[RMDB]
RNA sequence: GGGAACGACUCGAGUAGAGUCGAAAAAUCCCGAGUGCUGGCUCAUACUCAGAUCCCACAAAGGAUGUUGCUUACUACGGAUAGCAGGUCGGUGGCCAUGAAGGUUGGAACCCGCUGAGGAAUGUGUAACAACUCACCUGCCGAAGUGCGCAGCUCCCCCAUGACUAGACUUCGGUCUAGUCAUGGGAAAAGAAACAACAACAACAAC
Reactivity to 2A3 in 0.01 (KOAc 150mM, MgCl2 10mM, bicine 150mM(pH8.5), 24C), signal-to-noise 1, nucleotides 027 to 156: a000u010c010c010c000g010a040g010u070g010c070u000g010g010c010u000c010a130u070a070c030u070c070a010g010a060u090c000c000c000a050c040a050a190a070g000g030a050u160g010u070u000g050c000u050u090a010c040u010a010c040g010g010a070u090a030g000c000a000g020g040u050c050g010g010u050g020g040c030c000a040u110g080a090a010g020g010u100u050g000g090a180a190c010c010c000g050c050u040g050a090g040g060a300a020u010g140u010g020u180a050a050c030a060a160c020u020c040a040c000c000u000g000c010c010g000a020a010g010u010g040c020g000c040a020g000c010u070c000c000
The data come from the RNA Mapping Database (RMDB), library PDB130. The record gives the reactivity of an RNA of 207 nucleotides to 2A3. 2A3 is a SHAPE reagent: it acylates the 2'-hydroxyl of flexible nucleotides of all four kinds. The RNA was probed in 150 mM KOAc, 10 mM MgCl2 and 150 mM bicine (pH 8.5) at 24 C.